[RMDB]
RNA sequence: GGGAACGACUCGAGUAGAGUCGAAAACCUCACUACAUUUUACUGUUCCUAAAGAAUUUGUGACAGGUAGAGUAAAACGUAUUGCAAGGUUUAUCAGUUCCUAUAAACAGGUAAAUAACAAUAUAUGAAAAGCAAAGACUGUUCGCAGUCUUUGCAACCUUGUUCAUGGGUUCGCCCAUGAACAAGGAAAAGAAACAACAACAACAAC
Reactivity to 2A3 in 0.01 (KOAc 150mM, MgCl2 10mM, bicine 150mM(pH8.5), 24C), signal-to-noise 2, nucleotides 027 to 156: c000c000u030c000a000c010u030a010c000a070u000u000u000u000a020c030u050g140u110u030c010c000u050a070a120a020g110a270a300u300u260u300g080u060g070a010c070a050g000g080u070a030g010a000g080u020a000a000a000a000c020g000u000a000u010u030g050c070a050a020g030g040u000u000u040a080u150c000a020g050u010u040c000c000u050a030u120a120a080a010c030a000g000g130u040a080a100a120u120a110a020c040a060a130u150a070u030a090u190g110a040a090a010a000g000c000a000a000a000g000a000c000u010g010u030u070c200g000c120a000g000u020c000u000u000u020g000c000a000a000